Background: Source: RMDB library M2PK50, as collected in RNAgym. This 177-nucleotide RNA was probed chemically with DMS and 2A3. 2A3 adducts were read by reverse transcription with SuperScript II with manganese. The RNA was probed in 150 mM KOAc, 10 mM MgCl2 and 150 mM bicine (pH 8.5) at 24 C. Reactivities are given for positions 27 through 126.
RNA sequence: GGGAACGACUCGAGUAGAGUCGAAAAUAGUCGGAAUUCGUUCCGACUAGAUGAACCCUGCAAGCGGCAGCGCGCUCAAAAGAGCACGCAAAAGCAACGCAAAAAUGAACUUAUUCGUAAGUUCAAACUGUUAGAAAUCAUUCGUGAUUUCUAACAGAAAAGAAACAACAACAACAAC
Reactivity to DMS in 0.01 (KOAc 150mM, MgCl2 10mM, bicine 150mM(pH8.5), 24C), signal-to-noise 5, nucleotides 027 to 126: u000a000g010u000c010g000g000a020a040u000u010c160g020u000u000c000c000g000a010c000u010a000g000a160u010g020a160a130c010c000c000u010g010c070a100a300g010c020g000g010c300a210g010c010g000c030g010c000u010c010a110a050a110a120g000a000g030c000a010c020g000c000a020a040a270a140g010c020a040a110c170g010c030a000a050a070a090a120u000g010a020a010c000u000u000a030u000u010c190g010u010a000a000g000u000u000c000a030a070a190
Reactivity to 2A3 in 0.01 (KOAc 150mM, MgCl2 10mM, bicine 150mM(pH8.5), 24C), signal-to-noise 5, nucleotides 027 to 126: u000a000g000u010c000g000g040a010a020u080u030c190g050u090u000c010c000g000a000c000u000a000g000a010u130g050a050a100c000c000c010u000g030c040a070a200g020c020g060g000c060a020g000c000g000c000g000c000u010c010a300a300a120a080g010a000g000c010a010c020g000c000a010a050a020a030g010c020a020a050c080g010c020a060a090a050a010a060u060g000a000a000c000u020u010a010u080u050c130g060u050a010a010g000u010u000c010a020a060a020